[RMDB]
RNA sequence: GGGAACGACUCGAGUAGAGUCGAAAAAGAUGGCAGGUUCACCCCGUACGGUGCGGAAGUUCGCGCUUCCGUGAAACGCGAAAAUCGGACGGUGGCUGCAAGUCGCAUGGCAAAACCGCGGCAAGUGUUAACCUGGACCUCUUCGGAGGUCCAGGAAGACUAAAGUCUAGUUCGCUAGACUUUAGUCAAAAGAAACAACAACAACAAC
Reactivity to 2A3 in 0.01 (KOAc 150mM, MgCl2 10mM, bicine 150mM(pH8.5), 24C), signal-to-noise 3, nucleotides 027 to 156: a000g130a070u150g060g000c000a010g000g060u180u150c040a050c000c010c000c010g010u020a020c070g050g040u050g010c000g010g010a010a010g020u120u260c100g010c010g020c090u010u010c020c030g000u030g040a090a110a030c140g030c030g110a070a030a000a060u080c010g000g020a020c030g050g020u060g000g010c020u000g000c020a030a020g010u000c010g020c040a060u170g040g000c020a010a030a050a100c020c030g000c000g020g010c040a070a060g040u030g020u130u110a010a070c010c000u000g000g000a000c000c010u000c000u000u010c040g070g000a000g010g000u010c000c000a000g000g000a000a000
Reactivity to DMS in 0.01 (KOAc 150mM, MgCl2 10mM, bicine 150mM(pH8.5), 24C), signal-to-noise 2, nucleotides 027 to 156: a110g010a120u000g000g010c040a040g020g040u000u000c040a110c000c020c010c010g020u000a020c030g040g010u000g000c030g000g020a070a060g000u010u000c170g010c300g030c000u000u000c020c060g000u000g020a040a050a040c010g030c040g020a050a060a060a110u000c050g020g010a070c000g030g040u000g020g020c000u000g030c020a090a080g020u010c010g070c010a040u010g030g020c020a110a010a060a300c030c000g000c020g020g030c010a060a050g020u000g000u000u000a150a150c000c000u000g010g010a000c000c000u010c000u010u000c300g010g020a030g020g000u010c000c000a010g000g000a000a020
This 207-nucleotide RNA was probed chemically with 2A3 and DMS.
For DMS, 2,652 sequencing reads were counted.
Source: RMDB library M2RFPK, as collected in RNAgym.
The RNA was probed in 150 mM KOAc, 10 mM MgCl2 and 150 mM bicine (pH 8.5) at 24 C.